[RMDB]
RNA sequence: GGGAACGACUCGAGUAGAGUCGAAAAGUGCGAGGUCUACCUUUUCUUUCGAUGGUUGAAGUCGAACAUGAGACCUGUAACUUAGGUUCGUUAUGAAGUUAUCGCUGGAUCCAUCUACCUCGCUGAAGAUAUUGUGGCAUUUCGAUGUUACAAUAUCAAAAGAAACAACAACAACAAC
Reactivity to DMS in 0.01 (KOAc 150mM, MgCl2 10mM, bicine 150mM(pH8.5), 24C), signal-to-noise 9, nucleotides 027 to 126: g020u020g010c000g010a010g000g010u000c100u010a120c070c020u010u010u010u000c030u000u010u000c050g010a020u000g000g010u020u010g010a180a090g000u010c020g000a020a110c040a030u000g000a050g000a060c060c050u010g000u040a070a100c200u030u030a020g010g000u010u010c050g010u010u010a050u020g010a160a080g010u020u020a070u000c020g010c030u000g000g000a110u010c050c040a050u010c050u010a080c000c000u000c000g010c000u010g000a130a110
Reactivity to 2A3 in 0.01 (KOAc 150mM, MgCl2 10mM, bicine 150mM(pH8.5), 24C), signal-to-noise 9, nucleotides 027 to 126: g090u070g000c000g000a000g010g010u030c040u060a130c020c010u070u070u050u030c030u010u080u070c030g000a000u000g020g040u150u050g060a040a010g030u100c020g010a030a010c010a030u090g010a040g050a060c010c000u020g080u120a120a140c070u070u100a010g020g000u070u060c040g080u120u060a050u120g090a120a070g080u090u080a140u090c000g000c000u010g000g030a010u000c000c000a000u000c000u010a010c000c000u000c000g000c010u010g010a050a020
This 177-nucleotide RNA was probed chemically with DMS and 2A3. DMS adducts were read by reverse transcription with MarathonRT. Reactivities are given for positions 27 through 126. The 2A3 profile rests on 83,713 reads. Source: RMDB library OK1LIB, as collected in RNAgym.